[RMDB]
This 207-nucleotide RNA was probed chemically with 2A3 and DMS. The 2A3 profile rests on 3,187 reads. The RNA was probed in 150 mM KOAc, 10 mM MgCl2 and 150 mM bicine (pH 8.5) at 24 C.
RNA sequence: GGGAACGACUCGAGUAGAGUCGAAAAGAAUGUAAUCUUCGGAUUACAUUCAAAAACCGUAGGUAGUGAUUUCUUCAACAGCGUGUAUUCGAAAGAGUACACGACAUGAAGAAUCCUACCUAAACGGAAAAAAGGUUCGGCAUUCGUGCCGAACCAACAUAGUGACUCGAUUCGUCGAGUCACUAUGAAAAGAAACAACAACAACAAC
Reactivity to 2A3 in 0.01 (KOAc 150mM, MgCl2 10mM, bicine 150mM(pH8.5), 24C), signal-to-noise 3, nucleotides 027 to 156: g000a000a000u000g000u010a000a000u000c010u050u080c250g000g000a000u000u010a000c000a000u010u000c000a000a000a000a050a020c000c010g000u010a010g000g000u010a010g010u090g250a030u170u170u110c010u010u000c010a100a090c040a130g060c010g010u010g000u000a000u010u010c010g030a060a070a060g010a050g000u000a010c010a000c010g020a010c000a060u070g000a000a000g000a000a000u000c000c000u010a000c000c000u000a000a020a000c010g010g110a020a020a010a120a080a100g000g010u000u010c000g000g000c010a020u020u080c200g100u050g000c000c000g000a000a000c000c000a000a000
Reactivity to DMS in 0.01 (KOAc 150mM, MgCl2 10mM, bicine 150mM(pH8.5), 24C), signal-to-noise 1, nucleotides 027 to 156: g000a010a010u000g020u010a030a000u000c000u000u000c300g060g010a020u000u000a010c010a000u000u010c000a040a110a080a120a140c010c020g020u000a020g010g000u000a010g010u000g040a010u010u000u000c030u000u010c000a040a100c170a210g040c010g000u010g000u000a010u000u010c000g000a200a140a300g010a030g050u010a020c000a000c010g020a010c030a300u010g010a010a060g010a050a030u010c000c000u000a020c000c000u000a000a020a090c010g030g000a000a070a050a160a120a060g000g000u010u000c020g020g030c000a170u010u010c230g000u000g060c030c000g020a020a000c000c000a000a030
Reactivities are given for positions 27 through 156.